[RMDB]
RNA sequence: GGGAACGACUCGAGUAGAGUCGAAAAUGAAAUAAAGUGUACCAAAUGGUAGGUACACACCAAGUGUGCGGUGGUCGCACAGAACCAGCAGUCAAUAGAGACUGCAAAACCUAACCAAAGAAAAAAACGUGUAAUGACUCUUCGGAGUCAUUACACGAAAAGAAACAACAACAACAAC
Reactivity to DMS in 0.01 (KOAc 150mM, MgCl2 10mM, bicine 150mM(pH8.5), 24C), signal-to-noise 3, nucleotides 027 to 126: u000g000a080a080a140u010a090a090a130g000u000g000u010a010c000c000a060a100a190u010g000g020u000a140g000g000u000a030c000a000c000a050c140c130a080a120g030u010g040u000g010c020g000g030u010g010g020u000c020g000c000a010c010a040g010a090a050c120c160a170g000c020a010g010u020c000a130a140u000a160g000a190g010a010c000u010g000c010a030a020a070a070c080c070u010a040a110c070c070a060a100a110g010a030a000a060a060a050a020a190
Reactivity to 2A3 in 0.01 (KOAc 150mM, MgCl2 10mM, bicine 150mM(pH8.5), 24C), signal-to-noise 3, nucleotides 027 to 126: u060g000a000a000a040u210a060a110a040g000u000g000u000a010c010c000a040a080a150u210g120g010u070a080g000g000u000a000c000a000c000a000c010c010a070a020g140u040g000u000g050c010g010g090u160g060g090u210c010g000c020a000c000a030g030a030a020c030c020a010g000c000a000g000u000c000a010a010u090a190g160a020g000a060c000u010g020c010a010a020a000a020c010c010u040a010a010c020c010a120a110a060g130a100a070a040a020a010a000a020